[RMDB]
RNA sequence: GGGAACGACUCGAGUAGAGUCGAAAAGAUAUGGAUGUAGGGAGAAGUUGGUCGGAAACGACCAAUACUUCAUCGAUCUACGAUCCUAAGUCAAAGACCGUUCUCAAGUUCGCUUGAGAACGGUCAAUCCGUCUAUACGGUUCGCCGUAUAGACGGAAAAAGAAACAACAACAACAAC
Reactivity to DMS in 0.01 (KOAc 150mM, MgCl2 10mM, bicine 150mM(pH8.5), 24C), signal-to-noise 2, nucleotides 027 to 126: g000a070u000a300u010g000g010a020u010g000u000a000g010g020g010a060g020a030a050g020u000u010g000g000u010c000g000g020a070a100a200c010g000a000c000c000a000a010u000a030c020u000u000c040a180u000c170g010a110u030c000u000a000c010g000a010u000c000c000u000a050a120g020u000c100a130a120a090g000a010c000c010g000u000u000c000u000c000a040a000g010u000u010c230g020c000u000u010g010a020g000a000a000c000g000g000u000c010a000a050
Conditions: 150 mM KOAc, 10 mM MgCl2 and 150 mM bicine (pH 8.5), 24 C.
Structure probing data (DMS) for a 177-nucleotide construct.
It was measured as part of the RMDB library TTRDEL.
The DMS profile rests on 2,438 reads.